[RMDB]
RNA sequence: GGGAACGACUCGAGUAGAGUCGAAAAUACACUUUACGUGUGCUGGUUUCAUUUCUUUGUCCCAAACCAGGCACGCGUAAUUAAAGGCCAGUUUGGCCAGGUCCGCGUUAUCGAUGGUCACCAAUAAUACAUACCUUUUCUUCGGAAAAGGUAUGUAAAAAGAAACAACAACAACAAC
Reactivity to 2A3 in 0.01 (KOAc 150mM, MgCl2 10mM, bicine 150mM(pH8.5), 24C), signal-to-noise 4, nucleotides 027 to 126: u110a010c020a010c060u030u030u010a000c010g010u000g000u000g010c010u000g020g010u050u050u060c090a110u080u220u000c120u110u140u230g060u050c000c010c010a000a010a010c030c010a070g120g100c010a000c010g000c000g000u000a000a000u040u090a150a040a000g000g010c010c020a070g130u090u200u160g050g010c000c000a010g000g050u010c020c020g030c040g050u030u060a130u130c030g040a090u070g060g000u040c030a010c070c020a040a030u170a120a020
Reactivity to DMS in 0.01 (KOAc 150mM, MgCl2 10mM, bicine 150mM(pH8.5), 24C), signal-to-noise 5, nucleotides 027 to 126: u010a120c130a120c100u000u000u000a000c010g020u000g000u000g000c000u000g000g000u000u000u010c080a080u000u000u000c050u010u000u000g010u000c010c010c020a090a030a010c000c000a030g020g020c000a010c000g020c000g010u000a010a010u010u010a050a090a090g010g010c000c010a130g010u000u010u010g020g010c010c020a030g000g010u010c040c020g020c070g010u000u010a050u000c060g000a060u000g010g000u000c040a120c060c060a080a100u000a070a130

This 177-nucleotide RNA was probed chemically with 2A3 and DMS. Source: RMDB library M2PK90, as collected in RNAgym. DMS adducts were read by reverse transcription with MarathonRT. High 2A3 reactivity points to a flexible backbone, as in loops and unpaired stretches. Values are in units of 0.01, from 0 to 300, in steps of 10.